[RMDB]
RNA sequence: GGGAACGACUCGAGUAGAGUCGAAAAGACGAUGAUGAGUAUUGCUACUGCGGCUUGCGCUUUUUGCAUGGCUCAAACUGCGAAUGCGUCAGAAAAUAAUUCUGCAUCAGAUGUGAAGCAGAAUGUCGGAUGCUACUGCAUUCGUGCAGUAGCAUCCAAAAGAAACAACAACAACAAC
Reactivity to DMS in 0.01 (KOAc 150mM, MgCl2 10mM, bicine 150mM(pH8.5), 24C), signal-to-noise 2, nucleotides 027 to 126: g010a060c050g030a080u000g010a150u010g000a070g000u010a060u030u000g000c030u010a020c130u000g040c040g040g020c140u000u000g020c080g000c040u000u030u020u020u000g010c110a090u030g000g030c030u010c020a040a090a070c040u000g000c060g010a030a070u000g000c030g000u000c030a120g010a100a080a030a040u000a080a020u010u000c000u000g020c010a090u010c010a110g000a100u000g000u000g020a060a070g020c000a010g000a030a000u000g000u000c100
Reactivity to 2A3 in 0.01 (KOAc 150mM, MgCl2 10mM, bicine 150mM(pH8.5), 24C), signal-to-noise 2, nucleotides 027 to 126: g030a020c040g040a080u170g000a020u060g000a000g050u080a020u110u070g000c030u000a030c020u030g020c010g080g000c080u030u110g100c030g020c010u090u100u010u100u130g050c000a080u050g090g010c010u000c030a040a090a080c070u140g030c040g040a100a050u090g000c000g000u020c010a000g140a020a090a000a000u230a010a050u010u030c020u010g050c000a010u010c000a040g200a300u260g090u040g170a010a010g010c000a000g020a010a010u030g040u030c000
Description: An RNA of 177 nucleotides, treated with DMS and 2A3 and read out base by base. Conditions: 150 mM KOAc, 10 mM MgCl2 and 150 mM bicine (pH 8.5), 24 C. The data come from the RNA Mapping Database (RMDB), library OK2TST. The DMS profile rests on 1,294 reads. For 2A3 the reverse transcriptase was SuperScript II with manganese.